[RMDB]
RNA sequence: GGGAACGACUCGAGUAGAGUCGAAAAAGCUGGUAGUACGACGGUACUACCAGCAUAAUUCGUGGUUCGAAAACCUCCCACGCAAAAAAACUAAGGAAAAACGCCGAGUAGUACGCUACUCGGCGAAGGUACCGGAAUCAGUUCGCUGAUUCCGGAAGCAUACAAUAUAGUUCGCUAUAUUGUAUGCAAAAGAAACAACAACAACAAC
Reactivity to 2A3 in 0.01 (KOAc 150mM, MgCl2 10mM, bicine 150mM(pH8.5), 24C), signal-to-noise 4, nucleotides 027 to 156: a000g000c010u020g030g010u000a000g000u010a020c050g070a050c150g250g020u000a000c000u000a000c000c000a010g000c000a000u020a000a050u050u050c010g000u020g020g030u040u140c100g070a050a070a130a200c010c010u020c010c010c000a030c020g100c050a060a060a050a060a040a050a080c090u160a080a120g020g050a060a130a070a010a010c010g000c000c000g010a000g000u000a000g000u020a010c130g000c060u000a000c000u000c000g000g000c000g000a000a000g010g000u020a040c000c000g000g000a000a000u000c000a000g050u050u100c160g010c110u000g000a000u000u000c000c000g000g000a000a000
Reactivity to DMS in 0.01 (KOAc 150mM, MgCl2 10mM, bicine 150mM(pH8.5), 24C), signal-to-noise 1, nucleotides 027 to 156: a180g010c010u000g000g020u000a020g030u010a030c010g000a210c300g020g020u010a010c000u040a000c000c000a020g020c030a010u000a020a190u010u010c030g010u000g020g000u010u000c030g000a150a090a110a280c010c020u000c030c010c000a040c010g030c130a000a000a050a100a040a060a030c120u000a020a030g010g020a040a050a080a160a150c010g050c000c020g000a020g000u000a010g020u000a130c280g010c020u000a000c000u000c000g000g000c000g000a000a010g000g000u000a090c000c000g000g010a060a010u010c000a000g000u000u000c300g040c000u010g000a030u000u000c000c000g000g020a000a030
Chemical mapping of a 207-nucleotide RNA with 2A3 and DMS. The 2A3 profile rests on 3,523 reads. The RNA was probed in 150 mM KOAc, 10 mM MgCl2 and 150 mM bicine (pH 8.5) at 24 C.